[RMDB]
Chemical mapping of a 177-nucleotide RNA with 2A3 and DMS.
RNA sequence: GGGAACGACUCGAGUAGAGUCGAAAAGAUAUGGAACGAAUUGUAGAACUACAAGUGUUAUCGGAAACGAUAACCUUGCUACAACUAUUCCUAAGUCAAAACUUUUAGCGGUUCGCCGCUAAAAGAACUCGGAUAAUAGGUUCGCCUAUUAUCCGAGAAAAGAAACAACAACAACAAC
Reactivity to 2A3 in 0.01 (KOAc 150mM, MgCl2 10mM, bicine 150mM(pH8.5), 24C), signal-to-noise 3, nucleotides 027 to 126: g010a020u060a040u160g020g000a020a030c050g040a210a300u010u010g010u010a000g010a120a070c100u240a040c300a020a000g040u060g000u300u000a010u000c000g020g020a120a050a030c010g000a000u000a000a000c000c010u000u000g000c000u010a000c010a020a010c030u060a070u020u000c000c000u030a140a030g030u020c030a020a070a160a290c020u000u030u000u010a000g020c020g040g060u030u040c300g040c050c020g000c020u010a010a000a000a000g000a020a040
Reactivity to DMS in 0.01 (KOAc 150mM, MgCl2 10mM, bicine 150mM(pH8.5), 24C), signal-to-noise 3, nucleotides 027 to 126: g000a060u000a300u000g000g000a000a000c080g010a020a110u000u000g000u000a020g000a070a060c080u020a300c000a000a000g010u000g020u000u000a000u000c000g010g010a110a050a180c000g000a010u000a000a000c010c000u000u000g010c000u000a000c020a000a010c040u000a270u000u000c000c020u000a020a160g010u000c030a070a060a130a170c020u000u000u000u000a010g000c010g000g010u000u020c270g000c000c000g000c000u010a000a010a010a010g000a060a160
The reactions ran in a buffer of 150 mM KOAc, 10 mM MgCl2 and 150 mM bicine (pH 8.5), at 24 C.